Structure probing data (DMS and 2A3) for a 177-nucleotide construct. Reactivities are given for positions 27 through 126. The RNA was probed in 150 mM KOAc, 10 mM MgCl2 and 150 mM bicine (pH 8.5) at 24 C. The 2A3 profile rests on 1,223 reads. In probing experiments dimethyl sulfate is read out at A N1 and C N3, which are open when not base-paired. It was measured as part of the RMDB library OK1LIB.
RNA sequence: GGGAACGACUCGAGUAGAGUCGAAAAGUCUCACGAGUGCAGAGACAAAGGUAGUUGACUCCGGAGCUACCAGUACUCGAAUGAAUGCGAAAGAGUUCAUGUAUUCCAACCGGAGAAGAACUCAAAAACCCGGAUAUCAGUUCGCUGAUAUCCGGGUAAAAGAAACAACAACAACAAC
Reactivity to DMS in 0.01 (KOAc 150mM, MgCl2 10mM, bicine 150mM(pH8.5), 24C), signal-to-noise 1, nucleotides 027 to 126: g000u000c030u020c080a210c040g000a000g000u000g040c090a070g000a090g000a230c150a100a020a120g000g070u000a000g090u020u000g000a190c000u000c000c000g000g000a190g000c010u000a000c000c020a170g010u000a000c060u000c000g060a090a010u070g070a100a080u000g000c030g000a070a270a130g000a010g000u020u000c000a220u000g000u000a150u000u000c100c120a090a150c020c010g030g020a000g000a180a090g000a010a080c000u000c000a000a060a030a120
Reactivity to 2A3 in 0.01 (KOAc 150mM, MgCl2 10mM, bicine 150mM(pH8.5), 24C), signal-to-noise 2, nucleotides 027 to 126: g050u000c000u000c000a010c000g000a000g000u130g000c110a010g060a060g020a300c060a090a080a000g000g000u000a000g000u020u020g000a070c000u030c000c000g000g020a010g020c000u000a000c000c000a000g000u010a020c030u010c030g040a090a080u080g060a060a020u120g040c030g010a130a100a140g000a080g000u000u020c030a100u230g100u300a130u210u020c180c070a060a100c040c010g010g000a000g000a010a000g010a000a000c040u000c000a020a030a020a030